This 177-nucleotide RNA was probed chemically with 2A3 and DMS.
The RNA was probed in 150 mM KOAc, 10 mM MgCl2 and 150 mM bicine (pH 8.5) at 24 C.
The DMS profile rests on 5,038 reads.
Values cover nucleotides 27 to 126.
DMS (dimethyl sulfate) methylates the pairing face of unpaired adenines and cytosines.
Source: RMDB library RFMREP, as collected in RNAgym.
DMS adducts were read by reverse transcription with MarathonRT.
RNA sequence: GGGAACGACUCGAGUAGAGUCGAAAAUGACGGGAAAUUAGGGUUUUGUACCGGAGAGGGAGCCUGAGAGAUUGCUCCCACGUCCAAGGACGGCAGCAGGCGCGAAAAUUGCCCACUCUUUGCAGGACAUUUGUAUUUGGUUCGCCAAAUACAAAUGAAAAGAAACAACAACAACAAC
Reactivity to 2A3 in 0.01 (KOAc 150mM, MgCl2 10mM, bicine 150mM(pH8.5), 24C), signal-to-noise 2, nucleotides 027 to 126: u070g030a020c020g010g010g030a030a040a130u100u080a130g070g030g000u030u030u100u120g060u080a070c020c030g010g010a050g010a010g040g000g000a010g000c020c050u070g030a020g000a000g020a080u080u190g010c000u000c000c000c010a000c010g050u000c000c000a020a030g070g000a020c020g020g000c010a000g000c000a020g040g000c030g000c030g110a070a030a020a020u100u070g040c010c010c010a040c000u030c010u090u090u110g040c070a040g000g070a020
Reactivity to DMS in 0.01 (KOAc 150mM, MgCl2 10mM, bicine 150mM(pH8.5), 24C), signal-to-noise 5, nucleotides 027 to 126: u010g010a070c050g010g000g010a080a060a100u000u010a100g010g000g010u000u000u010u010g010u010a080c070c040g010g010a160g010a160g010g000g000a040g020c000c100u010g010a200g010a090g000a170u010u000g010c040u000c000c010c010a040c080g000u000c020c050a100a120g010g000a080c070g000g000c080a050g010c040a070g010g020c040g000c040g010a020a040a060a120u000u000g010c010c020c010a110c110u000c030u000u000u000g010c080a080g000g010a210